[RMDB]
RNA sequence: GGGAACGACUCGAGUAGAGUCGAAAAUAAGAGCAUGUACGAAUCACGAUAUGAGAGUUCCUGGUGAAUCCCGGGUACAUGGAAAGGUAUUAAUCUCCCACUGCGUUCCCUUGCAGUAGGGAUAUAAGUUGUCUUAACACUUCGGUGUUAAGACAACAAAAGAAACAACAACAACAAC
Reactivity to DMS in 0.01 (KOAc 150mM, MgCl2 10mM, bicine 150mM(pH8.5), 24C), signal-to-noise 2, nucleotides 027 to 126: u010a080a080g000a120g020c040a000u010g020u010a010c010g020a110a100u010c050a040c070g000a120u020a130u010g010a050g020a240g000u000u000c020c010u000g040g010u000g000a070a130u000c050c070c030g010g010g000u000a020c010a030u010g000g020a090a070a050g000g000u000a090u010u010a090a110u000c110u000c000c000c000a030c000u000g010c010g000u000u000c020c010c020u010u010g000c000a020g010u010a090g020g010g000a020u010a010u010a060a130
Reactivity to 2A3 in 0.01 (KOAc 150mM, MgCl2 10mM, bicine 150mM(pH8.5), 24C), signal-to-noise 2, nucleotides 027 to 126: u190a060a030g100a020g020c040a020u030g000u060a040c050g100a080a070u050c020a010c020g070a080u090a100u300g190a130g000a000g050u070u040c040c000u020g030g020u050g120a100a030u100c040c020c010g090g000g010u000a000c000a030u010g020g060a150a010a000g040g020u170a050u220u210a180a130u080c020u000c000c020c000a000c010u010g000c000g020u040u030c040c000c000u000u010g000c020a000g000u050a100g040g000g040a000u010a000u000a030a030
Structure probing data (DMS and 2A3) for a 177-nucleotide construct.
The DMS profile rests on 1,589 reads.
The 2A3 profile rests on 1,085 reads.
For DMS the reverse transcriptase was MarathonRT.
2A3 adducts were read by reverse transcription with SuperScript II with manganese.